An RNA of 177 nucleotides, treated with 2A3 and DMS and read out base by base. The 2A3 profile rests on 1,676 reads. For DMS, 1,045 sequencing reads were counted. For 2A3 the reverse transcriptase was SuperScript II with manganese. It was measured as part of the RMDB library OK2TRN.
[RMDB]
RNA sequence: GGGAACGACUCGAGUAGAGUCGAAAAGUUCAAGGCCGUUGCCGUCACUGCAUAAACCAUCGGGAGAGCAGGCGGUACGCAUACUUUCGUCGCGAUAGAUGAUCGGGGAUUCAGUAACAUUCACGCCCUACCACCGACGAUUCGUCGUCGGUGGUAGAAAAGAAACAACAACAACAAC
Reactivity to 2A3 in 0.01 (KOAc 150mM, MgCl2 10mM, bicine 150mM(pH8.5), 24C), signal-to-noise 2, nucleotides 027 to 126: g040u030u060c070a020a040g150g000c090c020g090u100u080g030c030c000g010u040c080a020c210u020g000c020a040u140a150a120a070c020c010a270u210c190g140g010g000a130g020a020g090c010a020g040g000c000g000g000u020a010c040g000c010a010u030a110c000u000u080u030c060g060u010c020g030c030g130a040u100a050g100a010u110g040a070u040c050g000g030g030g030a050u090u040c040a040g050u040a030a040c050a030u060u060c090a050c090g030c020c010
Reactivity to DMS in 0.01 (KOAc 150mM, MgCl2 10mM, bicine 150mM(pH8.5), 24C), signal-to-noise 2, nucleotides 027 to 126: g000u000u000c050a100a070g000g020c080c030g040u000u000g080c030c000g010u000c070a160c060u010g030c070a110u030a090a150a150c020c030a210u030c120g030g000g000a080g000a140g020c030a020g000g000c000g000g010u000a080c040g010c060a050u020a050c080u000u000u000c110g020u000c000g000c030g000a060u000a060g000a080u020g000a070u000c040g020g010g010g010a080u010u000c030a030g010u050a030a020c210a060u020u000c080a120c180g000c080c010